Background
Chemical mapping of a 170-nucleotide RNA with 2A3 and DMS. It was measured as part of the RMDB library 15KLIB. Values are in units of 0.01, from 0 to 300, in steps of 10. The RNA was probed in 150 mM KOAc, 10 mM MgCl2 and 150 mM bicine (pH 8.5) at 24 C.

RNA sequence: GGGAACGACUCGAGUAGAGUCGAAAAGAUUUUCGAGGAAAUACUCCCAAGAAGUUCCCGGAGGGAUCCAAGAGACGGACGACUUUCCCCCAUUGGUUGGGAAAAGUCCCGGAACCAGGAAAUGGGAUGCCCGUGCCGUUCGCGGCACGGAAAAGAAACAACAACAACAAC
Reactivity to 2A3 in 0.01 (KOAc 150mM, MgCl2 10mM, bicine 150mM(pH8.5), 24C), signal-to-noise 2, nucleotides 027 to 129: g000a000u040u100u030u040c010g000a030g000g040a090a090a030u120a040c010u020c010c040c000a000a070g070a070a000g040u070u000c000c000c000g000g050a000g100g000g040a060u000c020c000a060a020g020a000g080a100c010g000g000a020c050g070a020c050u000u000u020c000c000c000c000c000a090u140u300g040g000u150u050g000g010g000a000a010a000a020g020u020c030c000c020g000g000a040a020c010c030a070g010g040a090a090a040u130g010g000g030a040u030g060c000
Reactivity to DMS in 0.01 (KOAc 150mM, MgCl2 10mM, bicine 150mM(pH8.5), 24C), signal-to-noise 2, nucleotides 027 to 129: g010a230u130u040u000u000c040g010a090g000g000a040a050a050u000a040c030u030c010c130c050a200a100g000a120a250g000u020u000c020c000c010g030g030a020g000g020g020a100u100c000c000a150a100g050a170g020a170c000g020g040a090c060g030a000c030u000u000u000c000c000c000c000c000a300u040u010g010g030u000u000g030g040g060a000a030a030a120g050u030c010c050c020g030g010a110a140c020c070a060g010g030a000a110a020u000g030g000g060a040u030g010c040